Record summary:
Conditions: 150 mM KOAc, 10 mM MgCl2 and 150 mM bicine (pH 8.5), 24 C. Chemical mapping of a 177-nucleotide RNA with 2A3 and DMS. For 2A3, 915 sequencing reads were counted. For 2A3 the reverse transcriptase was SuperScript II with manganese.
RNA sequence: GGGAACGACUCGAGUAGAGUCGAAAAUUAGAUUUAGGUGCACCUGGUAUCAUCGUUCAAAACGAAAAACGUAUGUUACAAGAAGCCGUUGACGCUUUAAUUGAUAAUGGUCGUCGUGGUCGUCCAGCACCCCUUUGGGCUUCGGCCCAAAGGGGUGAAAAGAAACAACAACAACAAC
Reactivity to 2A3 in 0.01 (KOAc 150mM, MgCl2 10mM, bicine 150mM(pH8.5), 24C), signal-to-noise 2, nucleotides 027 to 126: u130u060a010g100a070u160u110u100a130g000g000u020g000c070a040c000c000u110g100g000u070a080u080c010a000u000c010g040u040u000c060a030a070a030a070c080g020a220a030a040a000a000c020g210u300a030u140g050u130u010a040c040a080a000g180a080a010g030c000c020g130u100u050g030a030c050g000c000u110u000u060a130a100u110u220g120a020u030a200a000u060g000g000u040c000g000u000c040g000u060g060g000u000c010g030u000c010c000a000g010
Reactivity to DMS in 0.01 (KOAc 150mM, MgCl2 10mM, bicine 150mM(pH8.5), 24C), signal-to-noise 1, nucleotides 027 to 126: u000u030a000g000a080u000u040u000a080g000g000u000g030c010a070c110c100u070g000g030u030a000u010c000a050u030c020g080u070u030c300a100a050a070a020c250g080a050a150a060a040a020c110g000u080a000u000g000u000u000a000c080a050a170g000a080a140g000c030c000g050u000u000g000a180c150g000c060u060u000u000a000a220u000u000g010a070u000a110a020u150g000g030u020c010g040u000c000g000u000g000g040u000c080g000u020c000c010a210g000
It was measured as part of the RMDB library OK1LIB.